[RMDB]
RNA sequence: GGGAACGACUCGAGUAGAGUCGAAAAUGGUGCCCGUUCGCGGGCACCACCUCGUGGAUAGGGCCACGUUAAAUAGUUGCUUAAGCCCUAAGCGUUGAUAAAGAUGCGCGAAAUUCGUUUCGCGCAAUAUAUACACGUCCUUCGGGACGUGUAUAUAAAAAGAAACAACAACAACAAC
Reactivity to DMS in 0.01 (KOAc 150mM, MgCl2 10mM, bicine 150mM(pH8.5), 24C), signal-to-noise 2, nucleotides 027 to 126: u010g020g010u000g020c000c000c010g030u000u010c180g050c030g020g010g040c010a000c000c000a020c020c000u000c000g030u000g000g000a200u000a030g000g000g000c000c010a000c010g000u000u010a010a000a030u000a020g010u000u000g010c090u010u020a140a180g000c000c000c000u010a040a110g010c110g010u000u020g000a120u010a100a050a110g010a120u010g010c020g020c000g000a010a010a040u000u030c170g000u000u010u000c010g010c000g010c000a010a020